[RMDB]
RNA sequence: GGGAACGACUCGAGUAGAGUCGAAAAGAUAUGGAGCAUGGGAGCGUAGGGUCGGAAACGACCCAUACGCGAAGAACAUGUCUCCUAAGUCAAAAGGAAAUUGAUCGCUUCGGCGAUCAAUUUCCAACAUGUGUCUUACCUUCGGGUAAGACACAUGAAAAGAAACAACAACAACAAC
Reactivity to DMS in 0.01 (KOAc 150mM, MgCl2 10mM, bicine 150mM(pH8.5), 24C), signal-to-noise 2, nucleotides 027 to 126: g000a020u000a140u030g000g000a030g020c020a000u000g000g010g000a060g040c000g020u000a010g000g000g010u000c000g020g010a020a010a050c000g010a010c000c000c000a010u000a000c010g020c000g000a030a120g000a100a220c100a010u000g000u030c000u000c000c000u000a000a070g000u000c000a080a070a120a120g000g000a000a000a000u000u010g000a020u000c000g010c010u000u020c250g030g010c000g030a010u010c000a010a010u000u000u000c000c000a020a080